Annotation
An RNA of 207 nucleotides, treated with 2A3 and DMS and read out base by base. The reactions ran in a buffer of 150 mM KOAc, 10 mM MgCl2 and 150 mM bicine (pH 8.5), at 24 C. The 2A3 profile rests on 3,667 reads. It was measured as part of the RMDB library RNAMAK.
RNA sequence: GGGAACGACUCGAGUAGAGUCGAAAAUCCUAAGUCUGCUACUAUCCAUGUUGUCAGUCCACAUUCGGAAACGAAUGUUACAGGACUUGGAUUUACAUGGACGAAUAGCAGAUAUGGAAAAGGUCUGUCUUGACAGUUCGCUGUCAAGACAGACCAACUACUUCAUGAAGUUCGCUUCAUGAAGUAGAAAAGAAACAACAACAACAAC
Reactivity to 2A3 in 0.01 (KOAc 150mM, MgCl2 10mM, bicine 150mM(pH8.5), 24C), signal-to-noise 3, nucleotides 027 to 156: u030c000c000u010a070a030g010u010c010u000g000c000u000a020c020u020a040u010c000c000a010u010g010u000u010g010u010c000a000g000u000c000c000a010c000a010u000u010c010g000g050a040a060a030c000g010a000a000u000g000u020u090a120c090a120g000g000a000c000u020u090g040g010a020u220u170u080a010c000a010u010g010g000a000c000g060a190a220u010a010g000c010a000g010a010u010a030u030g050g010a030a140a050a060g000g010u000c000u010g000u000c010u000u000g000a000c000a000g040u050u070c200g050c210u000g000u000c000a000a010g000a000c000a000g000a000c000c000a000a000
Reactivity to DMS in 0.01 (KOAc 150mM, MgCl2 10mM, bicine 150mM(pH8.5), 24C), signal-to-noise 1, nucleotides 027 to 156: u000c020c000u000a090a220g010u000c010u000g020c000u030a010c050u010a100u000c010c010a020u000g040u010u000g030u010c010a050g020u010c020c000a210c000a020u000u000c020g020g010a180a140a300c000g010a030a000u000g010u000u000a040c030a030g000g000a000c000u000u010g040g020a060u000u010u000a010c000a010u000g000g010a010c020g040a080a040u000a020g000c020a000g000a030u010a070u010g010g000a070a040a150a160g030g050u000c020u000g000u010c000u000u010g010a040c000a030g010u000u000c300g030c030u000g030u000c000a040a000g000a000c010a010g010a000c010c000a010a050